[RMDB]
RNA sequence: GGGAACGACUCGAGUAGAGUCGAAAAUGACACUGGAUGUUUCGGCGCUCUUCAAGAAUACAAUUCUACAAAGAACCAAACAUGUGCUCCGUCCAAAAUACCUCCACCACUGCCCACAGCCCGUCCGAACUGAAUGGGUGUUCGCACCCAUUCAGUUAAAAGAAACAACAACAACAAC
Reactivity to 2A3 in 0.01 (KOAc 150mM, MgCl2 10mM, bicine 150mM(pH8.5), 24C), signal-to-noise 4, nucleotides 027 to 126: u130g020a000c000a000c050u090g060g040a040u020g030u010u040u040c060g000g000c050g030c080u030c020u080u050c050a070a050g010a060a040u160a140c050a090a110u030u030c020u010a040c080a040a160a030g020a100a100c040c010a030a040a010c030a040u110g000u060g050c010u000c020c010g030u020c010c020a090a020a010a020u120a070c000c000u000c010c000a030c000c020a020c030u020g010c010c000c000a030c010a010g020c000c000c000g050u020c010c020g030
Reactivity to DMS in 0.01 (KOAc 150mM, MgCl2 10mM, bicine 150mM(pH8.5), 24C), signal-to-noise 3, nucleotides 027 to 126: u020g020a140c080a110c050u020g030g010a090u000g020u000u000u000c030g000g020c090g030c090u000c000u000u020c090a120a010g000a020a020u010a170c180a180a060u020u000c000u000a150c170a130a060a090g010a100a080c070c060a040a070a110c120a110u010g030u000g000c020u010c020c000g020u000c030c050a000a030a010a080u060a080c020c020u000c070c020a030c040c020a050c050u020g000c010c020c060a060c080a050g010c010c010c030g030u010c060c070g010